Description:
Chemical mapping of a 177-nucleotide RNA with 2A3 and DMS. Values cover nucleotides 27 to 126. For 2A3 the reverse transcriptase was SuperScript II with manganese. The data come from the RNA Mapping Database (RMDB), library OK1LIB. The RNA was probed in 150 mM KOAc, 10 mM MgCl2 and 150 mM bicine (pH 8.5) at 24 C. The DMS profile rests on 7,943 reads.
RNA sequence: GGGAACGACUCGAGUAGAGUCGAAAAGAAGGUAAAACAGCCUGUGGGUGAAACACACCCACAGGGCCCAUUGGGCGCUAGCACUCUCGUAUCACGGUACCUUUGUGCGCCUGUUUUACCCAGAAAACCUCCAGUAAUGAUUCGUCAUUACUGGAGGAAAAGAAACAACAACAACAAC
Reactivity to 2A3 in 0.01 (KOAc 150mM, MgCl2 10mM, bicine 150mM(pH8.5), 24C), signal-to-noise 3, nucleotides 027 to 126: g090a050a020g000g010u000a000a000a000a000c000a000g000c010c000u000g000u000g000g000g010u010g030a030a070a020c110a010c000a000c040c000c010a000c000a000g000g000g000c020c000c000a030u260u300g000g000g000c020g000c100u130a050g000c000a000c010u000c000u000c010g010u000a010u020c030a020c190g160g000u010a010c000c000u010u010u010g000u000g000c020g000c000c000u010g000u000u000u000u000a000c000c000c000a000g060a010a120a010a020
Reactivity to DMS in 0.01 (KOAc 150mM, MgCl2 10mM, bicine 150mM(pH8.5), 24C), signal-to-noise 4, nucleotides 027 to 126: g000a170a070g000g000u000a000a010a000a010c000a000g000c000c000u000g000u000g030g000g000u000g000a100a230a150c280a160c020a000c000c000c000a000c010a020g000g000g010c010c000c000a040u010u080g000g000g000c000g030c030u050a070g020c000a010c000u000c000u000c250g000u000a010u000c030a150c260g020g000u010a010c010c030u000u000u020g010u000g030c020g020c000c000u000g010u000u010u000u000a010c010c010c050a060g010a090a060a110a090